[RMDB]
RNA sequence: GGGAACGACUCGAGUAGAGUCGAAAACGUAAAGGGCGAGCUUUUGUCCGGAAUGGUUCCGCCGUGAUCGGGCCAUGCAAUAGUUGCCAACGACAACCAUGCUCCGGUUGCUCAGGCAGCGUAACGCACAAUGGAACAACCUUCGGGUUGUUCCAAACUUGUAUACCUCGUUCGCGAGGUAUACAAGAAAAGAAACAACAACAACAAC
Reactivity to DMS in 0.01 (KOAc 150mM, MgCl2 10mM, bicine 150mM(pH8.5), 24C), signal-to-noise 2, nucleotides 027 to 156: c060g010u000a130a110a080g000g000g010c010g000a170g030c120u040u000u000u010g000u000c040c000g010g080a110a040u010g050g010u000u010c040c010g010c050c070g000u010g020a040u000c020g000g000g000c010c010a080u000g020c030a120a150u000a080g020u000u010g000c020c020a110a220c070g050a070c000a000a010c000c010a100u010g010c140u000c140c210g020g000u000u000g020c020u000c050a240g000g000c030a040g000c030g030u000a040a140c030g040c100a060c080a180a100u010g010g000a020a000c020a010a020c000c030u000u000c300g000g000g000u020u010g000u010u000c000c010a010a000a030
Reactivity to 2A3 in 0.01 (KOAc 150mM, MgCl2 10mM, bicine 150mM(pH8.5), 24C), signal-to-noise 3, nucleotides 027 to 156: c050g020u110a020a040a070g060g030g000c050g040a140g050c090u140u170u140u090g030u060c030c010g000g030a060a060u100g010g000u230u180c030c040g010c020c050g110u120g060a140u120c040g000g010g000c000c000a020u030g000c020a010a220u030a140g010u000u010g000c010c010a090a080c120g010a010c000a000a000c000c010a030u160g070c040u120c090c050g000g000u000u000g000c040u020c040a010g010g020c000a000g000c000g060u080a090a020c060g000c020a030c060a040a120u080g010g000a020a000c000a000a000c000c010u050u050c220g050g000g000u000u000g010u010u000c000c000a000a000a000

The record gives the reactivity of an RNA of 207 nucleotides to DMS and 2A3. Reactivities are given for positions 27 through 156. Source: RMDB library M2RFPK, as collected in RNAgym. For 2A3, 1,785 sequencing reads were counted. Conditions: 150 mM KOAc, 10 mM MgCl2 and 150 mM bicine (pH 8.5), 24 C. For 2A3 the reverse transcriptase was SuperScript II with manganese.